The record gives the reactivity of an RNA of 207 nucleotides to 2A3 and DMS.
The reactions ran in a buffer of 150 mM KOAc, 10 mM MgCl2 and 150 mM bicine (pH 8.5), at 24 C.

RNA sequence: GGGAACGACUCGAGUAGAGUCGAAAAGCCGAGAGGACAGGAGAGAUUUAGUUCAUUAAGGCUGCUCCUCUGUGCUGCCCCCACCCCGCUUCUGUGGCAGGCCUGGACCUGAUCUGCAAACAGACUUGCCUGCCUGUGCCUGUCCCUGAGGCCCAUCUCUUUAAGUACUGUUCGCAGUACUUAAAGAAAAAGAAACAACAACAACAAC
Reactivity to 2A3 in 0.01 (KOAc 150mM, MgCl2 10mM, bicine 150mM(pH8.5), 24C), signal-to-noise 2, nucleotides 027 to 156: g000c010c030g070a030g000a010g010g000a020c030a010g060g050a120g050a040g020a070u070u030u200a190g150u150u130c040a100u150u180a110a050g140g040c020u010g000c080u040c000c000u000c040u030g110u170g020c010u040g000c040c020c010c010c000a100c020c020c010c010g000c000u010u010c000u060g060u070g000g000c000a000g000g000c000c010u020g000g000a060c010c000u060g020a300u030c010u020g040c030a000a170a200c030a020g010a020c020u020u040g010c000c040u030g000c030c000u010g010u010g010c000c010u030g000u060c010c020c000u010g000a010g000g020c000c010c020a100u070c020
Reactivity to DMS in 0.01 (KOAc 150mM, MgCl2 10mM, bicine 150mM(pH8.5), 24C), signal-to-noise 2, nucleotides 027 to 156: g020c030c030g000a180g000a130g010g020a050c030a030g000g000a130g010a140g020a110u000u010u010a060g020u010u010c070a140u010u020a140a170g000g000c010u000g000c010u000c030c020u010c050u020g020u000g000c010u010g000c000c000c000c010c010a100c090c030c020c030g020c010u010u000c030u000g000u010g010g000c000a060g020g020c000c010u000g030g010a040c070c010u010g010a100u000c030u000g010c100a200a110a160c010a070g010a030c040u000u020g020c080c060u000g060c020c010u010g000u010g020c000c000u010g000u010c000c040c030u000g010a120g030g020c010c050c010a130u000c050
2A3 adducts were read by reverse transcription with SuperScript II with manganese.